[RMDB]
Chemical mapping of a 177-nucleotide RNA with 2A3 and DMS. For 2A3, 2,742 sequencing reads were counted. The reactions ran in a buffer of 150 mM KOAc, 10 mM MgCl2 and 150 mM bicine (pH 8.5), at 24 C.
RNA sequence: GGGAACGACUCGAGUAGAGUCGAAAAGAUAUGGAUGCGGAUAAGUGAUGACCCAGGGCUAAUCUCGGAAACGAGACAACCCUGGCAAGCUUACGCAUCCUAAGUCAAAGCCAUGUUCGCAUGGCAACGCUUAGUCAGAGUUCGCUCUGACUAAGCGAAAAGAAACAACAACAACAAC
Reactivity to 2A3 in 0.01 (KOAc 150mM, MgCl2 10mM, bicine 150mM(pH8.5), 24C), signal-to-noise 2, nucleotides 027 to 126: g030a000u050a030u140g000g000a000u010g000c040g090g110a120u080a180a010g030u000g140a300u160g060a110c000c010c000a000g030g000g000c030u160a160a080u070c010u010c010g040g020a070a060a060c010g010a010g020a000c010a010a040c020c020c010u010g000g000c000a010a050g010c020u000u020a010c000g000c000a000u000c000c000u000a030a000g010u010c110a080a050a010g000c000c010a000u010g030u040u100c300g040c150a000u020g010g010c010a010a030
Reactivity to DMS in 0.01 (KOAc 150mM, MgCl2 10mM, bicine 150mM(pH8.5), 24C), signal-to-noise 1, nucleotides 027 to 126: g000a000u000a300u000g010g010a020u000g000c010g020g020a280u000a000a000g020u000g000a060u000g000a120c300c040c000a000g010g000g060c020u000a170a300u000c010u000c010g000g010a010a060a090c000g000a000g050a000c020a100a200c010c000c000u000g000g000c050a040a050g000c000u030u040a070c010g000c010a000u000c000c000u000a010a040g020u000c050a080a060a170g000c000c010a010u000g040u000u020c260g020c000a010u000g000g030c010a020a060